Annotation:
Structure probing data (DMS and 2A3) for a 177-nucleotide construct. The reactions ran in a buffer of 150 mM KOAc, 10 mM MgCl2 and 150 mM bicine (pH 8.5), at 24 C. For 2A3, 5,249 sequencing reads were counted.
RNA sequence: GGGAACGACUCGAGUAGAGUCGAAAACUGGCCGAAUUGGGCGUGUCGAUCAGCGUCGGCGGCCUGUGGAACACGCUUGAGCGGCUCGACCUCAGUCUGAAAAAAAGAGUGCGCAUGCUGCCGAGCACUCAAUAACACGCUUCGGCGUGUUAUUGAGAAAAGAAACAACAACAACAAC
Reactivity to DMS in 0.01 (KOAc 150mM, MgCl2 10mM, bicine 150mM(pH8.5), 24C), signal-to-noise 3, nucleotides 027 to 126: c030u010g000g020c000c010g000a060a180u000u000g020g010g010c040g000u000g000u010c030g000a130u030c040a050g020c130g010u000c030g000g010c010g020g000c010c000u000g000u040g000g000a160a060c030a020c030g010c000u000u020g010a050g010c020g000g010c010u010c070g010a120c060c000u000c070a060g020u010c110u010g010a000a000a070a110a040a080a120g010a070g020u000g000c040g020c150a050u040g010c030u000g000c010c010g020a090g010c090a140
Reactivity to 2A3 in 0.01 (KOAc 150mM, MgCl2 10mM, bicine 150mM(pH8.5), 24C), signal-to-noise 6, nucleotides 027 to 126: c010u020g020g020c010c000g020a200a300u140u120g080g010g000c030g000u020g030u030c080g080a140u050c040a010g020c020g100u020c020g050g030c010g000g000c000c000u010g010u040g030g040a060a010c010a010c050g000c000u060u140g060a040g040c000g030g020c010u030c040g150a240c000c000u040c010a060g070u030c050u170g110a110a070a030a030a010a000a020g100a030g040u110g010c040g000c020a070u180g010c010u010g010c000c000g010a010g000c010a030